Conditions: 150 mM KOAc, 10 mM MgCl2 and 150 mM bicine (pH 8.5), 24 C. This 177-nucleotide RNA was probed chemically with DMS and 2A3. For 2A3 the reverse transcriptase was SuperScript II with manganese. For DMS, 35,475 sequencing reads were counted.
[RMDB]
RNA sequence: GGGAACGACUCGAGUAGAGUCGAAAACUCGUUACCGAUUUGCCUGAGCCGGAUUCGCCGACCAGAGCCACGGUCUCGCCGGGAUUGACGACAAUGUCCACAUCAUUGACCGUGACGAUCUCGCGCAAUGAUUUACGUAUUUCGAUACGUAAAUCAUAAAAGAAACAACAACAACAAC
Reactivity to DMS in 0.01 (KOAc 150mM, MgCl2 10mM, bicine 150mM(pH8.5), 24C), signal-to-noise 9, nucleotides 027 to 126: c030u000c020g010u000u000a070c030c010g000a160u010u010u000g010c030c010u000g010a170g020c020c020g010g000a300u000u010c180g020c020c010g010a040c030c020a050g000a120g020c030c300a060c030g000g000u000c060u000c050g010c030c010g010g000g000a030u000u000g000a090c020g010a130c030a030a030u000g000u000c080c190a100c190a070u000c010a020u000u000g000a110c060c010g010u000g010a140c050g000a020u000c010u000c010g010c140g020c060a140
Reactivity to 2A3 in 0.01 (KOAc 150mM, MgCl2 10mM, bicine 150mM(pH8.5), 24C), signal-to-noise 9, nucleotides 027 to 126: c010u010c020g060u080u090a040c010c020g030a200u070u040u170g020c000c010u040g030a040g020c010c020g050g020a140u200u150c150g060c130c000g020a030c000c010a020g010a040g040c010c020a020c010g020g020u010c020u040c050g020c010c010g010g010g010a010u010u030g030a010c020g010a020c010a020a020u040g030u070c110c050a120c020a140u150c000a010u020u040g060a120c100c010g010u020g100a060c020g010a010u000c020u000c010g040c010g000c040a030